Source information
An RNA of 177 nucleotides, treated with 2A3 and DMS and read out base by base. For 2A3, 3,397 sequencing reads were counted. The reactions ran in a buffer of 150 mM KOAc, 10 mM MgCl2 and 150 mM bicine (pH 8.5), at 24 C. The data come from the RNA Mapping Database (RMDB), library VIROID. 2A3 adducts were read by reverse transcription with SuperScript II with manganese.
RNA sequence: GGGAACGACUCGAGUAGAGUCGAAAAGAAGAGACUUACCUGUCGUCGUCGACGAAGGCUGGUAAGCCGUGACGCGUGGAGGAGAGCCCGGGUCGCGCUCUUGGGGGUAACCCCUUUGAGACUUGACGCUAUGGUACAAGUUCGCUUGUACCAUAGCAAAAGAAACAACAACAACAAC
Reactivity to 2A3 in 0.01 (KOAc 150mM, MgCl2 10mM, bicine 150mM(pH8.5), 24C), signal-to-noise 2, nucleotides 027 to 126: g150a070a020g040a000g020a030c000u010u000a010c010c000u030g020u000c000g000u000c010g090u130c130g020a240c020g000a040a000g030g000c010u000g000g000u030a000a010g000c010c020g000u010g010a010c030g020c020g300u290g030g020a060g090g080a120g040a040g080c000c020c000g000g060g010u010c000g020c000g000c020u010c000u040u040g010g000g020g000g010u060a100a150c000c000c000c000u000u030u070g010a010g000a030c020u030u090g020a020c090
Reactivity to DMS in 0.01 (KOAc 150mM, MgCl2 10mM, bicine 150mM(pH8.5), 24C), signal-to-noise 2, nucleotides 027 to 126: g000a180a140g000a130g020a060c000u000u020a010c010c000u000g000u000c010g010u010c000g010u000c190g000a100c050g000a080a010g020g000c030u010g020g020u000a020a020g010c040c020g020u010g000a060c050g000c050g020u000g030g000a060g010g000a100g000a120g010c030c010c010g020g000g000u000c010g000c050g010c010u000c000u000u010g000g010g010g000g000u000a110a130c020c000c000c010u000u000u000g020a040g000a170c050u010u010g000a170c180